[RMDB]
An RNA of 177 nucleotides, treated with 2A3 and DMS and read out base by base. DMS adducts were read by reverse transcription with MarathonRT. Reactivities are given for positions 27 through 126. Conditions: 150 mM KOAc, 10 mM MgCl2 and 150 mM bicine (pH 8.5), 24 C. Source: RMDB library M2PK50, as collected in RNAgym.
RNA sequence: GGGAACGACUCGAGUAGAGUCGAAAAUCACGCCAGUUCGCUGGCGUGAAAAGGACAAGACAAAAGUCUAAAGCCAAAAGGGAAAACCCAGACCAAUGGCAAAAAGCGGUACCUUCGGGUACCGCAACAUCACUAUCUGCUUCGGCAGAUAGUGAUGAAAAGAAACAACAACAACAAC
Reactivity to 2A3 in 0.01 (KOAc 150mM, MgCl2 10mM, bicine 150mM(pH8.5), 24C), signal-to-noise 2, nucleotides 027 to 126: u010c010a000c020g010c000c000a020g030u040u050c180g070c120u000g000g010c010g010u000g000a000a000a000a000g010g010a020c040a010a050g040a030c030a060a300a030a050g010u030c010u080a090a070a070g050c000c020a000a010a020a070g010g000g000a040a090a020a030c000c020c000a000g040a030c000c010a050a060u010g010g020c030a020a010a010a060a030g000c020g000g000u000a000c010c000u050u100c210g060g000g010u000a000c000c000g000c000a000a000
Reactivity to DMS in 0.01 (KOAc 150mM, MgCl2 10mM, bicine 150mM(pH8.5), 24C), signal-to-noise 2, nucleotides 027 to 126: u010c020a000c000g000c000c000a050g030u000u000c140g020c000u000g000g020c000g030u010g000a000a000a130a120g010g000a080c050a060a090g020a080c250a060a140a160a150g000u010c000u010a130a090a080g000c000c020a000a010a140a140g000g000g000a160a030a150a070c000c000c000a110g000a130c010c010a020a300u000g000g000c050a100a050a050a090a020g010c030g000g020u000a010c000c010u000u000c220g020g000g020u000a010c010c000g000c020a010a050